[RMDB]
Overview:
Source: RMDB library RFMREP, as collected in RNAgym. This 177-nucleotide RNA was probed chemically with DMS and 2A3. For DMS, 3,945 sequencing reads were counted. For 2A3 the reverse transcriptase was SuperScript II with manganese.
RNA sequence: GGGAACGACUCGAGUAGAGUCGAAAAGGUGGACAGUUCCAAAGGGAUCGCAUUGAUCCCAUGGUUAUCUUCCACCUCUCUUACCAGACUAUCAUAACAAAGUCUGGCCUUUUUCCCAUUGGAUCAUUAUCCGUAAAUACUUCGGUAUUUACGGAUAAAAAGAAACAACAACAACAAC
Reactivity to DMS in 0.01 (KOAc 150mM, MgCl2 10mM, bicine 150mM(pH8.5), 24C), signal-to-noise 5, nucleotides 027 to 126: g020g010u010g000g010a020c210a030g010u000u000c000c000a040a120a180g020g020g010a010u000c000g030c300a200u020u010g010a000u000c000c000c000a030u000g000g000u010u000a040u010c000u000u000c000c000a010c000c000u000c040u000c080u000u010a100c000c010a000g000a020c010u000a080u030c130a130u010a110a130c180a140a110a050g000u000c000u010g000g010c020c010u000u000u000u000u000c000c000c000a180u010u000g010g000a160u010c110a110u000
Reactivity to 2A3 in 0.01 (KOAc 150mM, MgCl2 10mM, bicine 150mM(pH8.5), 24C), signal-to-noise 4, nucleotides 027 to 126: g000g000u010g000g010a020c040a120g010u030u000c030c000a110a070a020g030g010g000a020u010c010g030c260a250u110u300g000a000u000c010c000c000a000u000g000g000u150u040a030u080c000u000u000c000c000a000c000c010u000c000u000c010u010u120a040c010c000a000g000a000c000u080a080u280c090a210u160a300a060c070a140a170a000g000u000c000u010g010g000c000c000u090u050u000u010u010c010c000c000a040u040u180g070g010a030u040c010a050u040